The data come from the RNA Mapping Database (RMDB), library OK2TRN. The record gives the reactivity of an RNA of 177 nucleotides to 2A3 and DMS. Conditions: 150 mM KOAc, 10 mM MgCl2 and 150 mM bicine (pH 8.5), 24 C. For 2A3, 7,017 sequencing reads were counted.
[RMDB]
RNA sequence: GGGAACGACUCGAGUAGAGUCGAAAACUCUAGUGACUAGCUCUAGCAUGCGAUCGUGAGUACUCGUACUCCAUGGCGCCAUGUCAUGCGAGUGUGAUCGACUGCUAGCAUGCAUGACGUAGCGAUCGAUUCACGAAUGUUUCGACAUUCGUGAAUCAAAAGAAACAACAACAACAAC
Reactivity to 2A3 in 0.01 (KOAc 150mM, MgCl2 10mM, bicine 150mM(pH8.5), 24C), signal-to-noise 5, nucleotides 027 to 126: c020u030c040u040a060g080u030g190a160c030u040a050g050c020u000c000u030a040g010c000a010u030g010c020g060a060u050c050g040u060g260a060g010u030a030c030u020c040g010u010a000c000u000c000c010a010u020g000g000c020g050c170c150a230u300g010u040c010a000u000g040c110g060a010g000u010g010u020g000a020u040c070g090a060c020u050g000c030u020a040g000c000a000u020g000c010a020u040g030a030c080g050u040a030g010c020g050a080u140c110
Reactivity to DMS in 0.01 (KOAc 150mM, MgCl2 10mM, bicine 150mM(pH8.5), 24C), signal-to-noise 5, nucleotides 027 to 126: c040u000c040u000a110g020u000g010a120c060u000a160g040c080u000c020u010a220g010c050a020u000g010c030g000a070u000c140g020u000g010a090g020u000a050c150u000c090g020u000a020c040u000c030c010a020u010g010g010c030g030c180c160a080u000g010u000c010a020u000g000c080g000a020g000u010g000u000g000a040u010c120g000a050c040u010g000c020u000a160g000c050a020u000g020c000a150u000g010a040c130g020u000a070g000c050g000a110u010c090